[RMDB]
Source: RMDB library OK2TRN, as collected in RNAgym.
This 177-nucleotide RNA was probed chemically with DMS and 2A3.
The RNA was probed in 150 mM KOAc, 10 mM MgCl2 and 150 mM bicine (pH 8.5) at 24 C.
For DMS, 1,105 sequencing reads were counted.
RNA sequence: GGGAACGACUCGAGUAGAGUCGAAAAGCAUCGUAGCUAGCAUCGGCUAAUCGCGUAAUUACGCGCGUAUACGCGUAAUGCGCAUGCUACGGCCGUAAUCGCGAUGCGCAUGCUAUAUAGCGCCGUAUCGCUGACCGAGAUUCGUCUCGGUCAGCGAAAAAGAAACAACAACAACAAC
Reactivity to DMS in 0.01 (KOAc 150mM, MgCl2 10mM, bicine 150mM(pH8.5), 24C), signal-to-noise 2, nucleotides 027 to 126: g020c070a050u000c070g010u030a060g050c020u000a180g010c050a080u000c070g010g000c010u020a170a180u000c090g010c000g020u000a060a070u000u000a000c060g030c000g020c090g050u040a130u000a040c000g020c000g020u000a000a000u000g000c010g010c030a080u000g000c230u010a080c170g000g010c050c040g000u000a040a040u000c110g020c030g000a040u000g020c000g010c090a000u000g000c010u000a060u000a140u020a070g020c040g000c110c010g020u000a050
Reactivity to 2A3 in 0.01 (KOAc 150mM, MgCl2 10mM, bicine 150mM(pH8.5), 24C), signal-to-noise 2, nucleotides 027 to 126: g000c000a020u050c100g040u050a080g000c080u030a000g020c030a040u070c030g040g040c010u040a110a030u100c040g000c000g030u030a170a160u000u030a000c000g050c000g000c050g210u220a080u090a150c010g000c000g000u000a000a000u000g040c000g000c010a000u080g050c000u110a060c010g080g000c030c000g030u060a040a070u130c080g000c000g040a040u080g000c000g000c030a000u080g030c000u020a050u020a040u050a220g040c110g010c030c000g020u050a050